An RNA of 177 nucleotides, treated with 2A3 and DMS and read out base by base. For 2A3, 1,164 sequencing reads were counted. Conditions: 150 mM KOAc, 10 mM MgCl2 and 150 mM bicine (pH 8.5), 24 C. Reactivities are given for positions 27 through 126. It was measured as part of the RMDB library OK2TST.
RNA sequence: GGGAACGACUCGAGUAGAGUCGAAAAAGUUUGUUGUUACAUGCACCAGCUUAAAGCGCUUACCAAUAAUGCGCGAUCGCUUAAAGAUCUUGCGAAUCCUUGCAGGGUGCUCGUUGGUAACAAUAUCAUAAACAGGUAAGUUCGCUUACCUGUUUAUAAAAGAAACAACAACAACAAC
Reactivity to 2A3 in 0.01 (KOAc 150mM, MgCl2 10mM, bicine 150mM(pH8.5), 24C), signal-to-noise 2, nucleotides 027 to 126: a010g120u180u150u040g010u030u000g000u040u060a060c040a030u110g000c010a000c000c000a000g040c040u050u170a130a050a000g000c020g000c020u060u090a090c030c000a040a090u130a130a050u230g000c000g010c010g050a060u050c010g000c040u020u070a000a100a070g050a110u080c040u090u070g000c010g040a080a100u060c040c010u030u050g000c030a080g100g040g030u000g000c020u010c060g080u060u110g070g040u010a010a010c010a000a000u070a050u190c040
Reactivity to DMS in 0.01 (KOAc 150mM, MgCl2 10mM, bicine 150mM(pH8.5), 24C), signal-to-noise 8, nucleotides 027 to 126: a110g010u010u000u010g020u010u000g020u000u010a050c060a110u010g020c040a030c010c010a140g000c030u000u000a050a070a150g010c020g010c050u010u010a170c180c110a090a100u000a080a080u010g020c030g030c030g010a060u000c070g000c040u010u010a060a080a110g000a060u000c120u010u000g010c050g000a070a090u010c070c150u000u000g030c030a130g010g010g010u000g010c000u000c200g000u000u010g000g010u000a020a020c030a020a030u000a060u010c120